[RMDB]
RNA sequence: GGGAACGACUCGAGUAGAGUCGAAAAAGGCUAUUAACGUAGAAUGUGAAGCCCCGCGACUCAACUGCAGGCUCGCAGCCGAUACGAGCGAGCUGUAAGAGCAUAAUUGAGAAUGCACAGCGGACGCAAAUAUUAUAAUAUUCGUAUUAUAAUAUUUAAAAGAAACAACAACAACAAC
Reactivity to 2A3 in 0.01 (KOAc 150mM, MgCl2 10mM, bicine 150mM(pH8.5), 24C), signal-to-noise 2, nucleotides 027 to 126: a010g030g020c030u050a070u240u190a280a060c030g040u050a070g130a300a180u200g030u020g060a070a060g010c000c020c000c000g000c010g050a050c000u000c050a040a030c050u010g090c030a080g030g080c000u000c000g000c010a030g040c050c060g040a050u050a130c130g050a070g030c000g000a020g030c000u010g020u030a090a110g010a000g040c000a030u050a130a000u020u030g020a020g000a150a060u200g030c050a030c040a090g040c000g000g050a010c030g000c060
Reactivity to DMS in 0.01 (KOAc 150mM, MgCl2 10mM, bicine 150mM(pH8.5), 24C), signal-to-noise 3, nucleotides 027 to 126: a050g000g000c020u010a120u000u000a140a080c090g000u010a070g000a090a090u030g010u020g000a130a120g000c020c010c020c070g020c010g000a140c010u010c030a050a080c110u020g010c140a090g000g000c010u020c010g000c010a070g000c040c040g000a150u040a050c160g000a130g010c010g010a080g000c010u010g000u010a060a080g010a100g000c010a050u000a080a160u030u000g010a060g000a120a090u040g010c070a030c140a110g020c030g040g010a070c160g010c080